[RMDB]
RNA sequence: GGGAACGACUCGAGUAGAGUCGAAAAUAGAAGUUCUUCGAGAUUUCAAGGUCAAAGAAGAACCUUGGAAGUCAAUCAUUCAGCAUUUUUGCGACAAAGCAUUCAGAUUAACCAAUGAAAGGAUUAACGGAUCAUAUCCAUUCGUGGAUAUGAUCCGAAAAGAAACAACAACAACAAC
Reactivity to DMS in 0.01 (KOAc 150mM, MgCl2 10mM, bicine 150mM(pH8.5), 24C), signal-to-noise 1, nucleotides 027 to 126: u040a190g000a110a150g020u000u000c020u010u000c020g040a300g080a050u000u000u000c180a020a010g010g010u000c000a060a110a170g000a070a070g000a020a020c000c020u010u000g010g020a040a100g020u020c040a000a110u000c020a040u000u010c080a020g010c090a050u000u000u000u010u000g000c100g000a080c180a110a090a140g000c040a040u010u000c050a120g000a080u000u000a030a210c050c040a070a050u020g000a060a030a130g010g010a090u000u040a090a170
Reactivity to 2A3 in 0.01 (KOAc 150mM, MgCl2 10mM, bicine 150mM(pH8.5), 24C), signal-to-noise 1, nucleotides 027 to 126: u150a000g120a180a020g030u030u070c060u060u090c040g110a100g010a090u140u090u140c080a110a070g100g000u040c050a120a190a110g070a110a000g040a080a000c000c000u000u080g040g070a110a000g120u070c040a020a040u030c000a060u180u040c020a010g000c000a000u040u040u040u160u130g090c000g050a070c060a020a090a070g000c040a000u090u070c060a040g020a180u060u110a020a130c030c030a000a040u110g090a150a080a000g080g000a030u060u070a050a000
Chemical mapping of a 177-nucleotide RNA with DMS and 2A3.
The 2A3 profile rests on 661 reads.
For DMS the reverse transcriptase was MarathonRT.
It was measured as part of the RMDB library OK2TRN.